[RMDB]
RNA sequence: GGGAACGACUCGAGUAGAGUCGAAAAGAUAUGGACGGUGAAUGGAGAGGUUCGAAGUGAUCGGAAACGAUCACGUAGUUCGUUGAAAUUCCCGUCCUAAGUCAAAACACCGCCUUCGGGCGGUGAACCAAGUAUUGAUGUUCGCAUCAAUACUUGGAAAAGAAACAACAACAACAAC
Reactivity to 2A3 in 0.01 (KOAc 150mM, MgCl2 10mM, bicine 150mM(pH8.5), 24C), signal-to-noise 3, nucleotides 027 to 126: g030a010u050a030u120g000g010a000c010g020g060u300g110a020a000u030g020g020a070g000a020g090g110u010u030c010g070a130a000g010u000g010a000u010c010g020g000a060a050a030c010g010a000u000c010a010c000g000u010a000g000u000u020c100g030u000u020g010a030a020a010u000u000c010c000c000g000u010c010c010u000a000a000g000u000c000a000a000a010a050c010a000c000c000g010c010c020u060u080c230g120g010g000c000g010g000u010g000a010a000
Reactivity to DMS in 0.01 (KOAc 150mM, MgCl2 10mM, bicine 150mM(pH8.5), 24C), signal-to-noise 4, nucleotides 027 to 126: g000a050u000a300u000g000g000a000c000g000g010u010g020a000a010u000g000g010a300g010a020g020g040u000u000c010g010a120a300g000u000g000a000u000c010g010g010a080a080a200c000g010a000u000c000a000c010g000u000a230g000u000u000c000g020u000u000g000a230a140a030u000u000c000c000c000g000u000c010c000u000a000a040g000u000c040a070a070a120a150c000a010c000c000g000c000c000u000u010c150g010g000g020c000g000g010u000g000a020a140

Chemical mapping of a 177-nucleotide RNA with 2A3 and DMS. 2A3 adducts were read by reverse transcription with SuperScript II with manganese. The reactions ran in a buffer of 150 mM KOAc, 10 mM MgCl2 and 150 mM bicine (pH 8.5), at 24 C.